[RMDB]
RNA sequence: GGGAACGACUCGAGUAGAGUCGAAAAGAUAUGGAGGUAUCAUAGGGAGCGAGUGGUCGGAAACGACCACAUCGCUUUGAUCUAUAUACCUCCUAAGUCAAAAGCAUCUCAGUUCGCUGAGAUGCAACCUGGUAUUACCGUUCGCGGUAAUACCAGGAAAAGAAACAACAACAACAAC
Reactivity to 2A3 in 0.01 (KOAc 150mM, MgCl2 10mM, bicine 150mM(pH8.5), 24C), signal-to-noise 2, nucleotides 027 to 126: g010a000u020a010u120g000g000a010g010g020u010a000u050c110a030u140a040g150g060g130a110g090c010g010a000g010u010g000g030u020c000g030g030a030a020a020c000g020a000c000c020a010c000a040u020c000g010c000u030u020u080g010a000u000c000u000a010u010a000u000a030c000c000u000c000c000u010a000a000g010u000c020a020a010a000a200g010c000a010u030c000u000c000a010g090u060u150c300g020c130u020g010a000g000a000u000g020c000a000a010
Reactivity to DMS in 0.01 (KOAc 150mM, MgCl2 10mM, bicine 150mM(pH8.5), 24C), signal-to-noise 2, nucleotides 027 to 126: g010a010u000a210u000g000g020a020g000g000u000a010u000c290a000u010a000g000g050g000a050g050c000g020a030g020u000g000g010u010c000g020g000a040a060a130c000g000a020c000c000a000c000a010u010c010g030c000u000u000u010g020a100u010c000u000a010u010a070u000a010c010c000u000c000c000u000a000a060g000u010c050a120a060a160a210g000c000a000u000c000u000c000a010g030u000u010c270g010c000u010g000a010g000a020u000g010c000a010a030